[RMDB]
RNA sequence: GGGAACGACUCGAGUAGAGUCGAAAACGGAAGAUGAAAUUAUUGCGCUGACCGAUAUUUUUGCCGGCAGCGUGAAUAACGAAUUUGUCCGUUAUUUAUCACGGGAAAAUUUUCAUCUGCUGGCAGGGACGGAGGAGUCAUUCGUGACUCCUCCGUCAAAAGAAACAACAACAACAAC
Reactivity to 2A3 in 0.01 (KOAc 150mM, MgCl2 10mM, bicine 150mM(pH8.5), 24C), signal-to-noise 2, nucleotides 027 to 126: c040g000g010a080a000g070a090u090g050a020a090a070u200u140a090u170u150g040c010g020c040u000g040a270c000c000g010a030u030a060u170u100u040u250u180g150c010c000g000g090c000a000g020c010g040u000g010a000a000u000a020a010c040g110a040a180u060u020u050g220u080c000c000g010u000u000a000u000u220u000a100u090c040a000c000g000g020g120a000a010a010a000u110u160u000u000c010a070u000c000u060g100c010u070g000g000c070a030g040g020